[RMDB]
RNA sequence: GGGAACGACUCGAGUAGAGUCGAAAAGAUAUGGAGCCUAAAGGAGAGGCAAACAUGUCGGAAACGACAUGGUAGCUACCCACCUCCGAUUGGGCUCCUAAGUCAAAGGUAGUCUUCGGACUACCAACUUAUCCUGCUUCUUCGGAAGCAGGAUAAGAAAAGAAACAACAACAACAAC
Reactivity to DMS in 0.01 (KOAc 150mM, MgCl2 10mM, bicine 150mM(pH8.5), 24C), signal-to-noise 2, nucleotides 027 to 126: g000a020u000a300u000g030g020a020g030c000c000u010a060a040a300g010g000a020g000a160g020g000c010a040a160a300c000a000u000g000u000c010g010g020a100a070a220c000g000a000c000a000u010g010g010u000a240g000c010u000a090c050c100c130a300c100c000u010c000c010g000a220u010u000g010g010g000c000u010c000c000u010a010a050g010u000c040a000a100a040g000g010u010a000g000u000c000u000u010c180g030g000a070c010u000a010c010c000a020a040
Reactivity to 2A3 in 0.01 (KOAc 150mM, MgCl2 10mM, bicine 150mM(pH8.5), 24C), signal-to-noise 1, nucleotides 027 to 126: g020a020u060a050u140g000g000a000g010c010c010u030a020a020a040g020g000a050g010a030g080g000c000a050a290a000c000a000u020g000u000c020g000g030a070a070a020c000g010a000c030a000u010g030g000u040a000g000c000u030a050c020c030c070a060c020c000u010c010c040g160a160u060u120g010g000g000c000u020c000c000u010a040a000g030u010c080a130a060a050g020g000u000a010g010u000c020u060u150c300g060g000a010c000u000a000c000c000a010a000